[RMDB]
RNA sequence: GGGAACGACUCGAGUAGAGUCGAAAAGCUUCAACAACGACGCGGGCGUGUGGGUAUGUCUGCUCACGACGCAGGUCGGCGGCGUCGGGCUCACCUUCAACGCCGCCUCGGCGGUGGUGCUGCUCGAGCACCUGGUGUCGUUCGCGAUACCAGGUGCAAAAGAAACAACAACAACAAC
Reactivity to DMS in 0.01 (KOAc 150mM, MgCl2 10mM, bicine 150mM(pH8.5), 24C), signal-to-noise 3, nucleotides 027 to 126: g010c070u000u030c040a100a170c150a070a120c030g000a050c080g040c040g010g000g010c000g000u000g000u030g000g000g000u000a070u030g010u050c100u010g000c010u000c030a020c010g000a090c020g000c040a120g000g010u020c080g010g020c100g000g000c040g020u000c030g010g000g000c050u000c080a060c070c030u020u020c160a080a160c070g000c000c000g010c050c020u020c110g000g020c030g010g010u010g000g010u000g020c050u000g010c050u020c010g000a150
Reactivity to 2A3 in 0.01 (KOAc 150mM, MgCl2 10mM, bicine 150mM(pH8.5), 24C), signal-to-noise 9, nucleotides 027 to 126: g030c010u180u160c050a110a080c010a050a020c050g060a010c020g030c050g210g080g000c020g010u030g000u030g010g020g020u090a120u270g230u090c170u150g010c010u010c020a030c010g180a020c000g000c010a010g040g050u050c030g010g000c020g030g000c030g030u030c010g010g000g000c010u020c020a050c000c000u110u190c090a130a060c040g000c000c000g050c030c010u030c060g050g000c000g000g030u030g010g000u020g030c070u020g000c000u040c040g020a020
Structure probing data (DMS and 2A3) for a 177-nucleotide construct. The 2A3 profile rests on 10,234 reads. 2A3 adducts were read by reverse transcription with SuperScript II with manganese. The reactions ran in a buffer of 150 mM KOAc, 10 mM MgCl2 and 150 mM bicine (pH 8.5), at 24 C. DMS adducts were read by reverse transcription with MarathonRT.